[RMDB]
Chemical mapping of a 207-nucleotide RNA with 2A3.
RNA sequence: GGGAACGACUCGAGUAGAGUCGAAAAAGGAUUCGACGCCGGUUGCGAAACUCUAGGUGCAUGCCGACUUGGUAACAGAAGUCGUAAAUCCACUGUUGCAACUACUUAUAGUUGCCAAUGACGACCAAUACGGUGCUGCUCUCGCUGCUUAAUUGCACUUCAUGUUGUCCUUCGGGACAACAUGAAGAAAAGAAACAACAACAACAAC
Reactivity to 2A3 in 0.01 (KOAc 150mM, MgCl2 10mM, bicine 150mM(pH8.5), 24C), signal-to-noise 1, nucleotides 027 to 156: a000g020g000a040u110u060c000g000a020c030g040c060c000g050g000u000u000g000c050g080a100a070a050c010u040c010u110a050g030g030u050g000c090a040u080g000c000c000g000a020c020u070u100g060g000u080a050a010c020a020g010a090a000g030u000c020g120u140a080a080a080u040c050c010a030c030u020g060u040u040g000c000a040a000c000u090a010c010u000u300a080u100a300g010u030u000g000c000c000a100a120u160g080a020c020g010a010c000c000a010a010u120a080c120g000g000u020g040c020u060g020c000u050c020u030c040g040c050u090g000c010u070u130a040a080u170u060g020c020a000